[RMDB]
RNA sequence: GGGAACGACUCGAGUAGAGUCGAAAACCUGCCAAGUCUUAGAAGCUUUAAGAUUCAUCGCAUUGAACUUGAUACGUAUAGUACAGCACCUUGAAAACAAAUCAUCUGCUAGUUCAGUAUUUUCUACACGUUUUAUGAACUUCGGUUCAUAAAACGUAAAAGAAACAACAACAACAAC
Reactivity to 2A3 in 0.01 (KOAc 150mM, MgCl2 10mM, bicine 150mM(pH8.5), 24C), signal-to-noise 1, nucleotides 027 to 126: c010c010u000g000c040c020a090a020g050u050c010u040u190a060g030a090a050g050c000u190u150u020a070a070g030a050u030u070c030a030u100c120g040c040a030u080u000g040a010a020c020u030u040g030a070u070a050c020g010u100a030u070a280g040u020a010c020a030g000c000a060c040c020u010u120g070a020a080a050a060c020a040a080a030u050c010a020u030c010u010g030c040u060a000g020u090u000c030a030g020u030a180u060u100u030u000c020u000a020c030
Reactivity to DMS in 0.01 (KOAc 150mM, MgCl2 10mM, bicine 150mM(pH8.5), 24C), signal-to-noise 1, nucleotides 027 to 126: c000c000u000g000c040c110a110a110g050u000c010u010u020a080g010a150a150g000c120u000u000u000a060a060g000a050u000u000c070a010u010c090g010c070a120u000u010g010a050a070c090u000u000g010a090u010a040c070g030u000a090u010a060g010u000a080c050a050g000c030a010c020c020u010u020g010a060a040a070a040c140a070a170a100u000c040a020u020c060u000g010c020u000a080g010u000u000c050a060g010u000a070u000u000u000u000c020u010a050c300
The data come from the RNA Mapping Database (RMDB), library RFMREP. Chemical mapping of a 177-nucleotide RNA with 2A3 and DMS. The DMS profile rests on 776 reads. High 2A3 reactivity points to a flexible backbone, as in loops and unpaired stretches. The reactions ran in a buffer of 150 mM KOAc, 10 mM MgCl2 and 150 mM bicine (pH 8.5), at 24 C.